[RMDB]
Structure probing data (2A3) for a 177-nucleotide construct.
For 2A3 the reverse transcriptase was SuperScript II with manganese.
The reactions ran in a buffer of 150 mM KOAc, 10 mM MgCl2 and 150 mM bicine (pH 8.5), at 24 C.
RNA sequence: GGGAACGACUCGAGUAGAGUCGAAAAGUAUCGUUAUGUGGUGCCUUCAGCAGUUAUUGUCAGUGAUCUAUUUCUGUCGGAGGAGGGAAACUUGGCUGCUGGUUUUUCUUACAUGCAGUGAUCACAGAGUCGAUACUGGCUUCGGCCAGUAUCGACUAAAAGAAACAACAACAACAAC
Reactivity to 2A3 in 0.01 (KOAc 150mM, MgCl2 10mM, bicine 150mM(pH8.5), 24C), signal-to-noise 1, nucleotides 027 to 126: g260u240a180u190c060g000u100u300a080u070g180u070g000g100u090g030c030c040u000u000c000a080g020c000a160g000u050u080a050u000u150g010u110c030a050g050u030g150a240u000c010u050a020u080u120u000c000u000g240u100c010g090g150a050g120g030a040g000g030g020a000a030a090c090u100u040g000g000c030u000g150c040u000g000g000u000u000u260u130u000c110u000u230a030c000a030u090g000c070a090g050u010g070a030u040c000a000c000a000g040

Reactivities are given for positions 27 through 126.